[RMDB]
RNA sequence: GGGAACGACUCGAGUAGAGUCGAAAAGACGCCUUUAGAAGAAGAGGCUAGGGGGUAUUCCGGCGUGGGAUACUUAGUAAUAUGCAACGCUAAUUGCAUAAGAUUGUAGGACGGAAUUUACAGUCUUUAGAGAUAAGCACGUUCGCGUGCUUAUCAACUCCGAUUUGUUGUUCGCAACAAAUCGGAGAAAAGAAACAACAACAACAAC
Reactivity to 2A3 in 0.01 (KOAc 150mM, MgCl2 10mM, bicine 150mM(pH8.5), 24C), signal-to-noise 1, nucleotides 027 to 156: g080a050c040g000c000c050u020u070u050a140g060a290a010g060a000a000g070a050g010g010c000u020a070g080g000g020g000g000u000a090u040u020c060c010g090g090c120g140u300g030g040g000a000u000a070c040u010u060a060g000u040a060a140u010a010u140g010c000a000a000c050g030c260u180a120a090u010u030g000c050a030u000a070a010g000a020u050u110g020u030a030g020g050a000c040g020g010a060a040u000u140u000a020c010a000g000u010c000u020u100u040a070g060a000g000a090u000a010a010g000c000a000c010g020u030u080c110g000c000g120u000g020c000u000u000a010u000c000a000a000